[RMDB]
RNA sequence: GGGAACGACUCGAGUAGAGUCGAAAACUGAAAAUAUUAACAGAAUAAGCUAUGAAACCUUUAGUAAUUCUGGUGCCUUAUAAGCAACGGUACCAAAUCCUGCAUUUACUGUUGCAUCAUCAACAACCACUGGGAUGGCAUUCGUGCCAUCCCAGUGAAAAGAAACAACAACAACAAC
Reactivity to 2A3 in 0.01 (KOAc 150mM, MgCl2 10mM, bicine 150mM(pH8.5), 24C), signal-to-noise 2, nucleotides 027 to 126: c070u110g060a040a000a030a010u300a100u300u190a140a020c000a040g060a000a000u240a200a160g030c030u100a030u070g070a160a010a220c040c000u240u030u070a060g000u020a000a070u110u060c030u000g000g070u060g090c040c090u300u300a280u020a160a030g050c000a000a070c050g000g000u050a030c050c030a010a010a010u160c020c010u000g020c060a080u000u030u130a020c050u000g030u050u000g000c000a130u150c000a070u070c000a010a100c060a070a110c130
Record summary
The record gives the reactivity of an RNA of 177 nucleotides to 2A3. The RNA was probed in 150 mM KOAc, 10 mM MgCl2 and 150 mM bicine (pH 8.5) at 24 C. It was measured as part of the RMDB library OK1LIB. 2A3 adducts were read by reverse transcription with SuperScript II with manganese. For 2A3, 530 sequencing reads were counted.